[RMDB]
RNA sequence: GGGAACGACUCGAGUAGAGUCGAAAAGCCUAAGCGUUCGCGCUUAGGCAAAGAAAGCGAAAACGCAACGCCAACGGAAAGGCGAAUUCCGAACAACGAUAAAAAGUUGCCUCUUCGGAGGCAACAAGCGUAGUAAGAUGUUCGCAUCUUACUACGCAAAAGAAACAACAACAACAAC
Reactivity to 2A3 in 0.01 (KOAc 150mM, MgCl2 10mM, bicine 150mM(pH8.5), 24C), signal-to-noise 2, nucleotides 027 to 126: g000c000c000u000a010a000g000c020g050u040u140c180g000c000g000c110u000u020a010g010g000c000a000a000a000g020a030a040a000g070c030g110a160a160a000a110c040g000c030a030a040c010g000c020c000a030a040c010g060g040a140a040a010g040g000c080g030a090a060u070u000c010c010g030a030a020c050a040a010c070g100a020u230a170a140a030a010a010g000u010u000g000c020c000u030c000u050u060c210g080g010a010g000g000c000a000a000c000a000a000
Reactivity to DMS in 0.01 (KOAc 150mM, MgCl2 10mM, bicine 150mM(pH8.5), 24C), signal-to-noise 2, nucleotides 027 to 126: g000c000c010u000a000a000g010c020g020u010u000c210g030c000g010c000u000u000a010g000g000c010a000a020a100g020a060a080a120g000c040g000a070a030a100a110c070g000c020a110a090c030g000c040c080a120a130c040g000g000a020a050a040g010g000c030g000a070a100u030u000c000c020g000a040a020c050a040a030c040g000a090u010a090a020a110a080a120g000u010u010g010c000c000u000c000u030u000c150g020g010a000g000g000c000a000a010c000a000a050